[RMDB]
This 207-nucleotide RNA was probed chemically with 2A3 and DMS.

RNA sequence: GGGAACGACUCGAGUAGAGUCGAAAAGCCCAGAAGCCUCGCCUCAAAAUCGUUUCAGUCCAAAAUUGAUUCGGCGGCCCUGUCAUGAGGCCGAAACGAAGGCACGUACCCCUUCGAAUGGCGUCGGAACUUUCAGUCGUAUUCGUACGACUGAAAAGAUAACUGACUGGUUCGCCAGUCAGUUAUCAAAAGAAACAACAACAACAAC
Reactivity to 2A3 in 0.01 (KOAc 150mM, MgCl2 10mM, bicine 150mM(pH8.5), 24C), signal-to-noise 3, nucleotides 027 to 156: g030c020c000c010a030g130a070a020g000c010c000u020c030g000c000c010u090c070a150a130a030a090u100c050g010u000u030u050c060a050g030u050c080c080a090a130a160a150u050u070g030a040u070u000c010g030g000c000g010g020c020c000c010u150g080u150c040a090u120g030a070g010g000c000c000g030a040a010a000c010g000a000a000g010g000c070a000c060g110u170a100c030c000c000c010u020u010c010g040a060a090u050g000g000c000g000u050c040g020g020a070a120c040u000u010u000c000a000g000u000c000g000u000a010u020u090c150g060u030a000c000g000a000c000u010g000a000a000a000a010
Reactivity to DMS in 0.01 (KOAc 150mM, MgCl2 10mM, bicine 150mM(pH8.5), 24C), signal-to-noise 1, nucleotides 027 to 156: g020c010c010c020a170g040a080a180g000c000c000u000c040g000c020c040u000c040a090a060a160a100u000c030g050u000u000u010c010a060g010u020c030c190a080a090a200a120u000u010g010a060u000u000c050g010g000c080g010g030c010c010c030u000g010u000c140a090u000g000a060g000g050c010c000g000a030a020a080c010g020a050a060g040g020c050a060c080g020u000a200c060c040c010c020u000u030c000g020a090a220u020g000g010c050g000u010c000g020g020a040a070c090u000u020u000c010a000g020u000c010g100u020a100u020u000c220g020u000a000c000g000a040c000u020g000a000a010a040a130

Annotation
DMS adducts were read by reverse transcription with MarathonRT.